This 207-nucleotide RNA was probed chemically with 2A3 and DMS.
For DMS, 6,984 sequencing reads were counted.
It was measured as part of the RMDB library OK3TST.
The reactions ran in a buffer of 150 mM KOAc, 10 mM MgCl2 and 150 mM bicine (pH 8.5), at 24 C.
Reactivities are given for positions 27 through 156.
[RMDB]
RNA sequence: GGGAACGACUCGAGUAGAGUCGAAAAAUUCUUACAGCGAAAUUGCAAAUGUAUUGAUUUACCUUACAUUGCAAUCUGUCUUAGUGGAACCUUAUCACCAGUGUAAGACAUAAUUUCUGGGUGUGAAUAAGUACACAGUAUAAGGUAAAUUUUGGUAUAAAUCAUGGUGAUUCGUCACCAUGAUUUAAAAAGAAACAACAACAACAAC
Reactivity to 2A3 in 0.01 (KOAc 150mM, MgCl2 10mM, bicine 150mM(pH8.5), 24C), signal-to-noise 3, nucleotides 027 to 156: a000u090u000c010u000u040a060c070a020g020c050g090a100a050a100u010u000g000c000a020a030a200u030g030u000a010u000u070g170a180u060u150u250a100c000c010u000u000a000c000a000u000u010g000c000a000a020u030c030u080g140u030c020u060u140a070g010u080g070g030a030a040c000c000u020u010a000u030c020a010c000c010a010g000u020g070u120a070a040g060a070c000a070u210a120a130u090u170u070c030u040g070g030g010u070g030u030g080a120a050u100a040a030g100u070a040c000a000c000a010g060u070a020u000a170a000g020g020u020a020a080a110u110u120u090u080g040g000u120a030
Reactivity to DMS in 0.01 (KOAc 150mM, MgCl2 10mM, bicine 150mM(pH8.5), 24C), signal-to-noise 3, nucleotides 027 to 156: a120u010u000c020u000u000a070c040a110g010c200g030a030a070a020u000u000g010c000a010a060a130u020g030u000a020u010u000g010a240u000u000u000a160c080c020u000u000a030c010a020u000u000g000c000a060a020u000c050u000g000u000c040u000u000a110g020u010g000g010a110a070c040c030u010u000a060u000c050a090c010c010a110g000u000g010u000a020a060g000a140c080a120u000a050a090u000u000u000c050u000g020g030g030u000g030u000g020a090a090u000a040a100g010u000a050c040a020c030a110g020u000a080u000a020a030g010g010u000a030a040a130u000u000u000u000g010g010u000a210